[RMDB]
RNA sequence: GGGAACGACUCGAGUAGAGUCGAAAAAGCAUGUUAGGUUCGCAUGGUGCACUAUUGUGUUAUUAGUAACUCAGUAAGCUUACAAUCGAAAAUGUUUAACCAUAAAAGGGUAAAAUGGUGUAAGACAGAUACCCUCUGAGCUUCGGCUCAGAGGGAACCUAGUAGUAUGGUUCGCCAUACUACUAGGAAAAGAAACAACAACAACAAC
Reactivity to 2A3 in 0.01 (KOAc 150mM, MgCl2 10mM, bicine 150mM(pH8.5), 24C), signal-to-noise 9, nucleotides 027 to 156: a000g050c030a030u070g010u090u080a050g020g040u050u070c030g000c070a050u070g040g040u080g030c020a010c060u060a120u110u120g020u000g020u040u030a050u030u040a060g120u060a050a050c010u010c070a020g050u080a060a030g020c020u050u060a040c050a070a130u080c060g070a070a050a030a050u030g020u030u090u050a030a010c000c000a010u080a110a180a010a020g060g010g000u060a060a070a010a020u040g020g010u020g030u050a040a030g030a020c030a010g080a040u150a160c000c000c000u000c000u000g000a000g000c000u030u090c230g070g000c000u000c000a000g000a000g000g000g000a000a000
Reactivity to DMS in 0.01 (KOAc 150mM, MgCl2 10mM, bicine 150mM(pH8.5), 24C), signal-to-noise 4, nucleotides 027 to 156: a100g010c030a040u010g010u000u000a090g030g010u000u010c080g010c040a080u000g020g040u010g000c040a100c100u000a040u000u010g030u000g010u000u020a060u000u010a150g020u000a030a070c020u000c010a090g010u000a080a170g020c030u000u000a050c050a040a100u000c040g000a080a050a080a090u010g010u000u000u000a060a070c010c000a070u000a050a080a160a150g020g020g000u000a020a060a080a050u000g000g010u000g010u000a040a070g010a100c050a110g010a170u000a070c000c000c000u000c000u000g000a020g010c010u000u000c300g030g030c000u000c000a000g010a020g010g010g000a000a010
An RNA of 207 nucleotides, treated with 2A3 and DMS and read out base by base. Reactivities are given for positions 27 through 156. DMS (dimethyl sulfate) methylates the pairing face of unpaired adenines and cytosines.